[RMDB]
RNA sequence: GGGAACGACUCGAGUAGAGUCGAAAAGGAUAAAACUAGAUUUUGUAACUCGUUUUUAGUUUUACUAUUAAUACUGAUUAAUUAGUUUUUUGACCCAACGAUUACUACGAACCAAGAUGUUGAUACUUAUCACUUGGUUUGAGCUUCAUAAGUAUCUGUAUAACCAUCUCUUCGGAGAUGGUUAUACAAAAGAAACAACAACAACAAC
Reactivity to 2A3 in 0.01 (KOAc 150mM, MgCl2 10mM, bicine 150mM(pH8.5), 24C), signal-to-noise 2, nucleotides 027 to 156: g100g010a100u050a080a000a000a000c000u000a010g000a120u130u200u140u300g010u020a000a030c090u010c050g010u050u000u050u010u030a010g000u000u000u020u020a010c000u000a000u030u050a030a060u140a300c080u100g080a060u020u020a050a040u120u040a000g040u030u000u010u040u070u020g070a060c030c030c020a010a010c000g000a000u000u000a020c000u000a010c000g000a000a000c000c000a010a000g050a120u070g000u010u020g000a010u000a000c000u080u130a070u200c000a000c010u000u000g000g020u000u000u020g030a000g020c050u140u210c150a050u030a020a010g000u010a000u000c010u060
Chemical mapping of a 207-nucleotide RNA with 2A3. Reactivities are given for positions 27 through 156. It was measured as part of the RMDB library ARCHII. Conditions: 150 mM KOAc, 10 mM MgCl2 and 150 mM bicine (pH 8.5), 24 C. 2A3 adducts were read by reverse transcription with SuperScript II with manganese.